[RMDB]
RNA sequence: GGGAACGACUCGAGUAGAGUCGAAAACUAAGGAGCGUGUGCUGGCGGCGGUCCUUCACGGUGCGUGGAUCCGGGCGGAUUACCAGUACGUGCGGGAGUUGUCUGCGCGGCUCGGAGCUACGGAAAAGCUGGAGCGCUCGUUCGUGGGCGCUCUAGCAAAAGAAACAACAACAACAAC
Reactivity to 2A3 in 0.01 (KOAc 150mM, MgCl2 10mM, bicine 150mM(pH8.5), 24C), signal-to-noise 9, nucleotides 027 to 126: c020u030a030a070g100g000a030g020c050g050u100g000u040g020c010u010g000g000c000g000g000c000g030g080u020c000c000u010u010c010a010c030g060g050u090g020c040g050u060g010g010a010u000c010c000g030g090g040c110g020g020a030u040u080a090c000c010a010g030u030a030c000g000u010g000c000g000g000g000a050g010u040u020g010u000c000u000g000c020g000c000g010g000c000u000c000g000g010a030g000c030u060a040c030g070g010a030a040a040a030
Reactivity to DMS in 0.01 (KOAc 150mM, MgCl2 10mM, bicine 150mM(pH8.5), 24C), signal-to-noise 9, nucleotides 027 to 126: c040u020a090a110g010g000a040g000c030g020u020g030u000g000c020u010g000g000c040g010g000c030g000g000u020c020c010u000u010c050a050c060g010g010u010g000c030g020u010g010g000a050u010c010c010g020g010g020c100g000g000a090u010u020a100c050c030a100g010u020a120c030g010u000g000c040g010g000g000a110g010u010u010g010u010c000u010g000c030g010c020g000g000c010u000c030g010g000a090g000c160u010a020c010g000g010a110a040a060a070

Source: RMDB library OK1LIB, as collected in RNAgym. Chemical mapping of a 177-nucleotide RNA with 2A3 and DMS. The reactions ran in a buffer of 150 mM KOAc, 10 mM MgCl2 and 150 mM bicine (pH 8.5), at 24 C. The DMS profile rests on 53,209 reads.